Structure probing data (DMS and 2A3) for a 177-nucleotide construct. Reactivities are given for positions 27 through 126. The RNA was probed in 150 mM KOAc, 10 mM MgCl2 and 150 mM bicine (pH 8.5) at 24 C. In probing experiments dimethyl sulfate is read out at A N1 and C N3, which are open when not base-paired. For DMS the reverse transcriptase was MarathonRT.

RNA sequence: GGGAACGACUCGAGUAGAGUCGAAAAUGCUUGCUCCGAUGCUUGUUUUUGCUGCUUCGGCGGCGCCAGCGGAAGAGGUUGGCAAGGUCGGUGUGGACUGGUUCGGCAAUGAUAUCGUUGUCGAUGAUCAUAGGAGGCUGUUCGCAGCCUCCUAUGAAAAAGAAACAACAACAACAAC
Reactivity to DMS in 0.01 (KOAc 150mM, MgCl2 10mM, bicine 150mM(pH8.5), 24C), signal-to-noise 2, nucleotides 027 to 126: u000g020c040u010u010g010c020u000c020c020g000a240u010g000c040u000u010g000u000u000u000u010u010g040c020u000g020c010u000u010c200g020g020c030g020g030c070g000c030c070a050g000c010g020g000a180a120g010a090g030g020u000u000g000g010c040a050a090g000g030u000c010g020g000u010g030u010g020g010a090c070u000g040g000u020u000c010g030g000c000a030a010u000g000a200u010a150u020c060g010u000u000g010u000c020g020a020u000g010a190
Reactivity to 2A3 in 0.01 (KOAc 150mM, MgCl2 10mM, bicine 150mM(pH8.5), 24C), signal-to-noise 1, nucleotides 027 to 126: u080g000c020u030u040g020c020u020c030c010g030a020u080g140c060u060u110g100u080u140u020u140u240g030c010u020g020c000u020u060c140g200g010c020g020g000c040g000c000c020a010g000c020g040g020a070a010g000a040g040g030u030u070g000g020c010a040a000g030g000u070c010g040g000u050g020u060g040g020a070c030u080g180g020u040u040c000g000g030c010a050a000u010g140a140u030a080u300c030g030u000u000g000u030c000g000a020u040g000a050